The record gives the reactivity of an RNA of 177 nucleotides to DMS and 2A3.
DMS adducts were read by reverse transcription with MarathonRT.
2A3 adducts were read by reverse transcription with SuperScript II with manganese.
Values cover nucleotides 27 to 126.
Source: RMDB library RFMREP, as collected in RNAgym.
The DMS profile rests on 1,211 reads.
[RMDB]
RNA sequence: GGGAACGACUCGAGUAGAGUCGAAAAGCUUAGAUCAAGUGUAGUAUCUGUUCUUUUCAGUUUAAUCUCUGAAAGUGUUCUAAGGAACACAACAUUGAUUAAUCUCAUUUUUGGAUCUCGUGGCAAGCCUAAUGGUUGUGUUCGCACAACCAUUAGGAAAAGAAACAACAACAACAAC
Reactivity to DMS in 0.01 (KOAc 150mM, MgCl2 10mM, bicine 150mM(pH8.5), 24C), signal-to-noise 2, nucleotides 027 to 126: g000c060u000u010a070g000a030u000c020a090a120g010u000g000u000a030g000u010a050u000c010u000g000u000u000c110u000u010u000u000c100a060g030u010u000u000a000a000u000c010u000c030u000g000a030a130a150g000u000g000u000u000c000u000a090a200g040g000a010a010c000a020c010a040a300c000a010u010u000g000a040u000u000a000a010u000c020u010c120a050u000u010u010u000u030g000g030a040u000c010u000c200g010u000g000g000c090a120a200g000
Reactivity to 2A3 in 0.01 (KOAc 150mM, MgCl2 10mM, bicine 150mM(pH8.5), 24C), signal-to-noise 2, nucleotides 027 to 126: g000c020u090u110a020g000a010u040c010a070a020g040u030g040u150a060g020u080a050u030c010u030g070u080u050c060u180u100u060u040c010a000g010u020u020u000a010a000u020c020u000c020u010g050a110a100a040g050u010g000u010u020c000u070a110a160g200g000a000a010c000a000c010a050a010c000a010u010u010g000a000u020u040a040a100u040c050u000c030a070u000u090u040u090u100g100g000a000u020c000u000c080g050u070g070g000c060a060a020g020